This 207-nucleotide RNA was probed chemically with DMS and 2A3.
RNA sequence: GGGAACGACUCGAGUAGAGUCGAAAAAUUGAAGUCCAUUGAAGGUGGAGCCAUAAGAGCUCAACUUGAAUAUGAGAAGCUGGCUCAAAGAACUAAUUUCAAUGAGUCAAUAGACGUUACGUUCGCACUUGAUUGGUCACUGUCACUAGGUAGCCAAAAACGUUGUAAAGUUCGCUUUACAACGUUUAAAAGAAACAACAACAACAAC
Reactivity to DMS in 0.01 (KOAc 150mM, MgCl2 10mM, bicine 150mM(pH8.5), 24C), signal-to-noise 3, nucleotides 027 to 156: a130u000u000g010a100a120g000u000c020c010a090u000u000g020a160a060g020g020u000g000g010a040g030c010c010a240u000a100a210g010a090g030c010u000c010a030a030c040u000u000g000a140a150u000a070u000g010a140g000a110a120g020c040u010g010g000c000u000c010a030a050a300g000a060a070c080u010a100a060u010u010u000c010a030a300u000g000a040g020u000c000a030a100u000a070g000a100c060g000u000u000a060c170g010u000u010c040g020c040a090c090u000u000g020a200u010u000g010g000u000c010a050c010u000g000u010c100a050c120u000a090g020g030u000a030g010c020c030a000a130
Reactivity to 2A3 in 0.01 (KOAc 150mM, MgCl2 10mM, bicine 150mM(pH8.5), 24C), signal-to-noise 3, nucleotides 027 to 156: a000u140u130g080a100a010g070u020c020c030a000u010u030g040a010a010g070g020u060g080g010a000g010c000c000a070u130a270a130g040a060g020c000u000c010a000a030c010u030u080g010a050a050u130a070u180g050a060g010a150a020g070c110u040g020g000c000u010c010a040a000a020g000a030a020c110u170a080a170u040u090u040c000a010a000u010g000a020g000u020c020a040a060u070a030g040a020c040g070u090u090a020c070g010u030u120c060g000c090a020c080u060u040g050a060u060u090g020g020u100c030a010c070u040g020u050c000a010c080u010a020g070g000u040a010g020c030c000a110a020
The RNA was probed in 150 mM KOAc, 10 mM MgCl2 and 150 mM bicine (pH 8.5) at 24 C.